About this RNA: This 207-nucleotide RNA was probed chemically with 2A3. The data come from the RNA Mapping Database (RMDB), library M2RFPK. The reactions ran in a buffer of 150 mM KOAc, 10 mM MgCl2 and 150 mM bicine (pH 8.5), at 24 C. For 2A3 the reverse transcriptase was SuperScript II with manganese.
RNA sequence: GGGAACGACUCGAGUAGAGUCGAAAAAGUUUCUCGAUAAUUGAUCUGUAGAAUCUGUCAAGUAAAACCCCAAAACCUUACACUGAGAGCAUUUAGCCUGAUUACUCUUUAAAUCAAAUCAGGCAAUUCAAGGUCGCAGUCUUCGGACUGCGACCAAGGAUAUAGUUUUCUUCGGAAAACUAUAUCCAAAAGAAACAACAACAACAAC
Reactivity to 2A3 in 0.01 (KOAc 150mM, MgCl2 10mM, bicine 150mM(pH8.5), 24C), signal-to-noise 2, nucleotides 027 to 156: a020g010u000u030u010c030u010c000g000a040u110a100a180u240u190g010a030u020c040u110g160u100a030g040a150a050u040c030u020g100u050c080a060a030g010u080a150a070a060a100c030c010c020c050a050a110a040a090c070c140u130u110a080c110a060c190u140g060a000g000a000g000c000a000u010u010u030a030g000c000c000u000g000a000u000u000a010c000u000c010u190u300u010a050a060a050u260c180a000a000a000u000c010a000g020g000c000a000a010u020u040c040a020a050g000g000u000c000g000c020a000g010u020c000u030u040c100g110g030a000c000u010g010c040g010a000c000c000a000a000